[RMDB]
RNA sequence: GGGAACGACUCGAGUAGAGUCGAAAAUGGAGGAAGGUCCGAAGAAACUGCCGGUGAUCCCGAUAGUUCCUCCGGUGCGUCGACGAUGCCUAUCGCAUGGGUAACACUCCGGCUCUGCCCCUUCACGAUCGUAAGAGCGUUUCGACGCUCUUACGAUAAAAGAAACAACAACAACAAC
Reactivity to DMS in 0.01 (KOAc 150mM, MgCl2 10mM, bicine 150mM(pH8.5), 24C), signal-to-noise 3, nucleotides 027 to 126: u000g010g000a070g010g010a120a090g010g020u000c060c040g000a070a070g010a060a070a050c070u000g000c040c010g000g010u010g010a130u030c050c030c000g000a070u000a070g010u000u000c020c000u000c020c020g010g020u000g000c050g010u010c070g020a090c110g000a100u010g020c010c080u000a080u000c140g020c070a240u000g010g010g020u000a050a080c110a110c030u010c020c010g000g000c040u010c050u000g000c030c030c030c070u000u000c090a090c230g000
Reactivity to 2A3 in 0.01 (KOAc 150mM, MgCl2 10mM, bicine 150mM(pH8.5), 24C), signal-to-noise 1, nucleotides 027 to 126: u080g020g000a040g020g020a140a000g040g060u090c070c030g020a020a000g020a000a100a020c030u030g030c000c000g000g030u040g000a070u030c050c000c000g010a090u050a050g070u040u030c000c000u020c000c030g000g000u070g020c040g010u020c050g000a050c040g030a010u060g000c010c000u100a090u100c030g000c090a070u060g100g000g010u030a050a000c030a030c020u010c010c000g030g000c010u030c010u000g060c000c000c010c000u020u050c040a050c110g060